[RMDB]
RNA sequence: GGGAACGACUCGAGUAGAGUCGAAAAGGGAUGGGAUCCGAAGCCCCAUUGAGGGAUAAUACAGGCUCUCCCGUCCAACUCCUAUUCCAACACGUCCUCGUCGUACAGAGUGGUAACAUGUGUCACCUAUACUAAUGACCGUUCGCGGUCAUUAGAACUACCCAUAUGACUUCGGUCAUAUGGGUAGAAAAGAAACAACAACAACAAC
Reactivity to DMS in 0.01 (KOAc 150mM, MgCl2 10mM, bicine 150mM(pH8.5), 24C), signal-to-noise 1, nucleotides 027 to 156: g000g000g000a070u000g030g020g030a030u010c020c010g000a140a300g010c000c020c010c050a300u000u000g020a170g000g010g030a100u000a100a110u000a120c090a220g010g000c090u000c060u010c010c000c010g040u000c030c000a050a020c050u010c030c010u000a300u000u010c050c020a100a120c030a050c030g000u000c010c020u000c030g000u010c100g030u000a120c040a070g020a100g000u000g010g000u010a010a090c060a080u000g000u010g010u000c050a070c030c010u000a160u000a130c010u020a030a020u000g000a030c000c010g010u000u010c270g030c000g070g000u010c010a010u020u000a030g000a080a240
Reactivity to 2A3 in 0.01 (KOAc 150mM, MgCl2 10mM, bicine 150mM(pH8.5), 24C), signal-to-noise 5, nucleotides 027 to 156: g080g000g000a020u010g000g010g000a050u170c000c010g070a080a030g010c020c010c020c030a170u200u240g030a300g010g020g010a020u100a220a070u110a200c100a050g000g000c000u010c000u000c020c000c000g000u000c000c000a010a010c020u000c000c010u030a110u070u100c080c030a060a010c020a030c040g050u020c010c010u080c070g120u040c030g010u090a080c040a090g060a030g090u100g030g020u110a090a060c100a130u120g060u030g050u100c040a080c070c040u070a060u100a280c010u000a030a000u000g000a000c000c010g020u010u040c220g010c000g060g000u000c000a000u000u000a000g000a010a000
Background
The record gives the reactivity of an RNA of 207 nucleotides to DMS and 2A3. The reactions ran in a buffer of 150 mM KOAc, 10 mM MgCl2 and 150 mM bicine (pH 8.5), at 24 C.